The data come from the RNA Mapping Database (RMDB), library OK1LIB. Chemical mapping of a 177-nucleotide RNA with DMS and 2A3. For DMS the reverse transcriptase was MarathonRT. The reactions ran in a buffer of 150 mM KOAc, 10 mM MgCl2 and 150 mM bicine (pH 8.5), at 24 C. The 2A3 profile rests on 3,492 reads. High 2A3 reactivity points to a flexible backbone, as in loops and unpaired stretches. Values cover nucleotides 27 to 126.
RNA sequence: GGGAACGACUCGAGUAGAGUCGAAAAGCUAGCAAAAAGCUCUGAACGCGAAAGACGAAAAGUCAUAGCGUGCACUUGUACGAAAAGUACUUGUGAGAUGACUGAGUCUAAUCAGAGCGCUAGCGAAGGGUUAGCAUUACUUCGGUAAUGCUAACCCAAAAGAAACAACAACAACAAC
Reactivity to DMS in 0.01 (KOAc 150mM, MgCl2 10mM, bicine 150mM(pH8.5), 24C), signal-to-noise 2, nucleotides 027 to 126: g040c000u010a020g070c110a010a030a120a150a150g030c000u010c000u000g000a020a050c080g000c070g010a080a140a010g000a000c000g000a240a040a060a030g000u000c000a020u020a180g000c120g050u010g000c000a000c000u010u000g000u000a000c030g020a030a080a040a140g000u000a000c000u020u000g020u000g000a070g050a110u000g000a080c010u010g030a210g000u000c000u000a100a070u000c000a000g010a000g050c000g000c000u000a000g000c000g000a090a040
Reactivity to 2A3 in 0.01 (KOAc 150mM, MgCl2 10mM, bicine 150mM(pH8.5), 24C), signal-to-noise 4, nucleotides 027 to 126: g000c000u020a000g010c020a070a050a110a100a000g010c010u000c000u020g060a130a070c050g060c080g230a210a120a030g030a010c010g050a110a070a140a000g000u020c000a000u040a030g160c100g070u090g040c010a000c000u000u000g000u020a000c010g060a140a000a300a050g000u000a000c000u000u010g010u010g010a090g010a050u040g000a020c020u060g060a010g020u010c010u030a030a080u020c000a000g000a000g010c000g000c010u000a000g000c010g000a030a030